Chemical mapping of a 177-nucleotide RNA with 2A3 and DMS.
In probing experiments dimethyl sulfate is read out at A N1 and C N3, which are open when not base-paired.
For DMS, 5,369 sequencing reads were counted.
The RNA was probed in 150 mM KOAc, 10 mM MgCl2 and 150 mM bicine (pH 8.5) at 24 C.

RNA sequence: GGGAACGACUCGAGUAGAGUCGAAAAGACCAAUCGUUCGCGAUUGGUCAAAAGGUGGAUGCUACGCUACCGAAGUAGCAAAAGAGCAGCUACAAAGCACAAAAACUUGGUUGUUCGCAACCAAGAAGAAUGACAUAAUCUUCGGAUUAUGUCAUUCAAAAGAAACAACAACAACAAC
Reactivity to 2A3 in 0.01 (KOAc 150mM, MgCl2 10mM, bicine 150mM(pH8.5), 24C), signal-to-noise 5, nucleotides 027 to 126: g000a000c000c000a000a000u010c010g030u050u040c260g000c000g120a000u010u000g000g000u000c000a010a010a000a010g110g000u020g010g010a020u040g010c010u060a040c090g000c010u010a010c000c050g060a180a030g010u010a000g000c020a090a030a080a000g090a010g010c010a000g010c000u010a010c030a060a140a040g100c100a050c050a140a090a050a060a020c020u010u010g010g010u010u000g020u050u060c220g020c050a000a010c000c010a000a000g000a000a010
Reactivity to DMS in 0.01 (KOAc 150mM, MgCl2 10mM, bicine 150mM(pH8.5), 24C), signal-to-noise 5, nucleotides 027 to 126: g020a020c000c000a000a010u000c000g010u000u020c280g060c030g000a010u000u000g010g020u000c010a030a020a050a110g010g020u000g000g010a040u000g000c010u000a040c130g000c020u000a040c010c090g030a070a110g010u000a000g000c010a110a040a090a120g010a050g010c010a010g010c020u000a020c030a100a100a110g020c140a060c210a050a040a080a090a120c000u000u000g000g010u000u000g000u000u010c170g010c010a010a020c010c000a000a010g000a060a060